The record gives the reactivity of an RNA of 177 nucleotides to 2A3 and DMS.
It was measured as part of the RMDB libraries RFM100 and RFMREP.
The 2A3 profile rests on 4,248 reads.
[RMDB]
RNA sequence: GGGAACGACUCGAGUAGAGUCGAAAAUCCCCUACUCUCAGCGCAAACAAACACAUCUGAAAAGGCAUCGGCCCCCGCUGGGACUGGCAUCCCGGUGCGAGGGCCUAACCACCAAGGAAGAAGAGAGAUUGAAAAUAUCCUUCGGGAUAUUUUCAAUAAAAGAAACAACAACAACAAC
Reactivity to 2A3 in 0.01 (KOAc 150mM, MgCl2 10mM, bicine 150mM(pH8.5), 24C), signal-to-noise 5, nucleotides 027 to 126: u020c010c000c000c000u060a050c000u000c000u000c020a040g030c020g040c070a050a060a110c020a030a090a010c040a030c020a120u040c030u060g040a080a060a080a050g030g000c020a050u080c030g000g000c000c000c000c000c000g000c000u030g000g000g010a010c040u070g130g020c030a060u030c000c000c000g060g000u020g050c090g030a300g030g000g000c000c000u010a000a000c000c010a010c000c010a040a030g070g020a020a080g040a160a040g040a020g000a010g010
Reactivity to DMS in 0.01 (KOAc 150mM, MgCl2 10mM, bicine 150mM(pH8.5), 24C), signal-to-noise 3, nucleotides 027 to 126: u010c020c010c000c050u020a060c000u010c000u000c000a050g040c060g000c080a090a070a070c190a090a080a070c090a030c070a090u000c050u000g050a080a070a120a100g020g000c040a090u010c180g000g000c000c000c000c000c000g000c030u000g000g000g020a020c040u000g010g010c210a300u000c000c000c000g040g040u000g030c130g020a060g010g000g000c000c000u000a020a030c040c000a060c060c000a100a180g010g000a030a050g020a150a050g010a070g000a090g010